[RMDB]
RNA sequence: GGGAACGACUCGAGUAGAGUCGAAAAACGUGGACGAGGAAACGUCCAUGCAGGACGAGCUGCGGCAAAGGGCCGUGCUGCAAAAGGUGGUCGUCAUCGGCGAAGCGGCGGCCCGGUUGCCUGCCGAUACUAGGCGUAGGUUCGCCUACGCCUAGUAAAAAGAAACAACAACAACAAC
Reactivity to DMS in 0.01 (KOAc 150mM, MgCl2 10mM, bicine 150mM(pH8.5), 24C), signal-to-noise 3, nucleotides 027 to 126: a150c070g000u000g000g000a000c010g010a180g050g010a100a130a120c010g010u000c000c000a010u000g020c080a060g030g000a110c090g010a120g010c060u010g010c060g010g000c030a030a100a170g000g010g000c000c010g040u000g020c000u000g000c000a040a040a190a130g000g020u000g000g000u010c210g000u010c040a050u010c030g010g010c190g000a110a120g000c000g000g030c020g000g000c010c010c000g010g010u000u000g020c010c010u000g050c010c060g000a190
Reactivity to 2A3 in 0.01 (KOAc 150mM, MgCl2 10mM, bicine 150mM(pH8.5), 24C), signal-to-noise 2, nucleotides 027 to 126: a000c020g000u010g000g000a010c030g010a070g260g210a140a110a040c020g000u000c000c000a010u020g020c050a030g040g090a050c040g050a050g080c090u090g050c030g040g000c020a030a030a050g000g010g020c000c010g030u050g100c080u190g000c040a020a080a060a100g090g030u060g020g040u240c060g160u170c030a050u050c010g060g000c060g040a110a020g000c000g010g000c010g020g030c100c010c030g010g010u070u000g000c000c030u030g010c010c020g030a010